This 207-nucleotide RNA was probed chemically with DMS. For DMS the reverse transcriptase was MarathonRT. Values are in units of 0.01, from 0 to 300, in steps of 10.

RNA sequence: GGGAACGACUCGAGUAGAGUCGAAAAUCCUAAGUCGCUGCGACCAUGCGAGGACUGGCGUCUCUAUCGGAAACGAUAGAGAGCCAGUCUACCCACCGCAUGACCGCAGCGAUAUGGAAAAGAACUGGAUACCACCUUCGGGUGGUAUCCAGUUCAACACAUUACUCAUGUUCGCAUGAGUAAUGUGAAAAGAAACAACAACAACAAC
Reactivity to DMS in 0.01 (KOAc 150mM, MgCl2 10mM, bicine 150mM(pH8.5), 24C), signal-to-noise 1, nucleotides 027 to 156: u000c000c000u010a050a220g030u000c000g030c000u000g050c000g000a030c030c000a030u000g010c000g000a200g000g020a040c020u000g010g010c000g040u000c000u030c000u010a020u010c000g020g010a220a110a300c010g020a060u010a010g000a000g010a300g000c010c000a020g010u010c000u000a010c010c010c010a300c120c020g000c000a010u000g000a010c000c020g000c000a000g070c000g000a000u000a030u000g020g000a140a060a110a120g020a010a000c020u000g000g010a050u000a010c020c010a040c000c000u010u000c240g060g010g000u020g000g020u000a010u000c000c000a020g010u010u000c010a030a260